[RMDB]
RNA sequence: GGGAACGACUCGAGUAGAGUCGAAAAAGCCAUACCAUUACGAUGGUAUGGCAAGUCCGUGACGGCGAUGGAUCCCGCCUGGCCGAUGCCGAACUGCCGAUCUAGCUGAUGGUUCCUGCCCCGUCAAAAAACGUAAAGCACUUCGGUGCUUUACGAACUCAGUAUCUAACUUCGGUUAGAUACUGAGAAAAGAAACAACAACAACAAC
Reactivity to DMS in 0.01 (KOAc 150mM, MgCl2 10mM, bicine 150mM(pH8.5), 24C), signal-to-noise 1, nucleotides 027 to 156: a160g000c000c000a020u000a000c000c000a080u000u010a160c270g050a160u010g000g020u000a000u020g000g010c000a000a000g050u000c010c020g020u010g000a050c040g010g070c010g000a170u000g000g000a040u000c020c020c090g000c010c030u010g020g010c040c010g010a160u000g040c050c000g000a120a070c050u000g010c030c040g000a070u000c080u000a060g010c030u040g000a110u000g050g020u010u000c020c020u010g000c000c050c000c030g050u000c020a000a040a060a050a080a140c010g000u000a000a010a010g010c000a000c000u010u000c300g030g030u010g000c020u000u000u010a000c010g000a050a110
Reactivity to 2A3 in 0.01 (KOAc 150mM, MgCl2 10mM, bicine 150mM(pH8.5), 24C), signal-to-noise 4, nucleotides 027 to 156: a000g000c000c000a000u010a000c000c000a000u040u030a050c250g120a040u010g000g010u000a000u000g000g000c000a000a010g020u000c030c020g030u050g020a010c010g000g020c040g020a030u050g030g020a040u070c000c010c000g030c020c040u040g040g000c010c040g040a040u100g050c030c020g130a160a110c090u110g010c020c010g050a070u040c060u090a030g020c030u050g020a120u080g050g010u030u020c000c000u050g010c000c010c000c010g030u000c010a030a070a040a030a000a040c010g000u000a000a010a010g000c000a000c000u000u120c210g110g000u000g000c000u000u000u000a000c000g000a000a000
About this RNA:
This 207-nucleotide RNA was probed chemically with DMS and 2A3. Conditions: 150 mM KOAc, 10 mM MgCl2 and 150 mM bicine (pH 8.5), 24 C. 2A3 adducts were read by reverse transcription with SuperScript II with manganese. Values cover nucleotides 27 to 156.